[RMDB]
RNA sequence: GGGAACGACUCGAGUAGAGUCGAAAAUUAGCAAGACUUCAGACUGGAAGUGCAAGGUGACAGAUGUACUUUUCCCCGGCCAAAAAUACAGUAGCGAUUGUAAUGUCGUACGGUAUUCUUUGGACGGCUACACUUGGCUUCGGCCAAGUGAAAAGAAACAACAACAACAAC
Reactivity to DMS in 0.01 (KOAc 150mM, MgCl2 10mM, bicine 150mM(pH8.5), 24C), signal-to-noise 2, nucleotides 027 to 129: u040u010a050g020c020a020a030g000a000c060u050u000c000a000g040a130c090u000g020g030a090a050g040u070g040c020a020a050g040g010u000g000a000c050a000g030a000u060g010u060a080c030u000u000u000u000c000c050c050c060g040g000c050c030a030a000a050a020a020u010a010c010a000g030u030a060g050c010g040a000u000u000g000u020a130a100u110g010u020c000g050u010a010c060g030g040u020a000u010u020c090u000u050u000g010g020a050c040g040g040c030u050a050
Reactivity to 2A3 in 0.01 (KOAc 150mM, MgCl2 10mM, bicine 150mM(pH8.5), 24C), signal-to-noise 8, nucleotides 027 to 129: u030u010a000g030c040a070a050g030a140c000u010u000c040a010g020a140c050u080g050g060a080a020g050u020g000c010a000a030g030g000u020g000a000c000a000g040a040u020g020u100a100c050u040u020u030u020c000c010c000c000g000g010c000c000a000a000a000a000a000u010a000c020a010g010u040a040g260c010g010a000u040u140g220u300a120a130u300g010u000c010g000u000a000c010g010g010u000a010u020u040c160u050u010u010g000g000a010c000g010g010c010u070a030